The data come from the RNA Mapping Database (RMDB), library RNAMAK.
Structure probing data (2A3 and DMS) for a 207-nucleotide construct.
2A3 adducts were read by reverse transcription with SuperScript II with manganese.
As a SHAPE reagent, 2A3 marks flexible, mostly unpaired nucleotides at the ribose 2'-OH.
[RMDB]
RNA sequence: GGGAACGACUCGAGUAGAGUCGAAAAGCGUACUACGUCCCGAAGAACAGUUUGGGAGCCUCCCUCAGUGUAUCCCAAAUAGGAUACACUACGCGAGGGAGGCGAAGAACAAACUGGGAGGGACGUAUCGCAAAACCGGAGACUUCGGUCUCCGGAACGCAUAUCAAAAGUUCGCUUUUGAUAUGCGAAAAGAAACAACAACAACAAC
Reactivity to 2A3 in 0.01 (KOAc 150mM, MgCl2 10mM, bicine 150mM(pH8.5), 24C), signal-to-noise 3, nucleotides 027 to 156: g000c000g010u070a090c030u000a000c040g000u000c020c000c000g040a220a030g030a090a010c000a000g000u000u000u010g030g010g020a050g000c000c000u000c000c000c000u010c000a000g000u000g000u010a000u010c000c000c080a130a300a100u300a090g000g000a000u010a000c020a000c020u030a020c120g110c090g000a000g000g000g000a000g010g000c000g000a000a000g000a030a010c000a000a000a000c000u010g000g020g020a080g000g000g000a010c000g000u010a000u020c010g000c000a060a050a010a060c010c000g020g000a000g000a000c030u120u150c300g050g000u000c000u000c010c000g000g000a000a020
Reactivity to DMS in 0.01 (KOAc 150mM, MgCl2 10mM, bicine 150mM(pH8.5), 24C), signal-to-noise 2, nucleotides 027 to 156: g020c010g030u000a060c100u000a040c030g010u000c000c010c000g000a180a210g030a120a210c000a020g000u000u000u000g010g000g000a300g010c010c000u000c000c000c010u000c010a300g040u000g010u000a000u000c000c000c020a050a140a250u000a020g020g010a020u000a010c000a020c000u020a040c110g040c200g030a050g020g050g020a020g010g010c000g000a030a060g010a190a140c010a020a020a030c020u000g000g000g030a250g000g000g020a030c000g030u000a000u000c020g050c000a050a030a090a130c010c020g000g010a040g000a070c010u010u000c240g060g000u000c000u000c000c000g000g000a000a040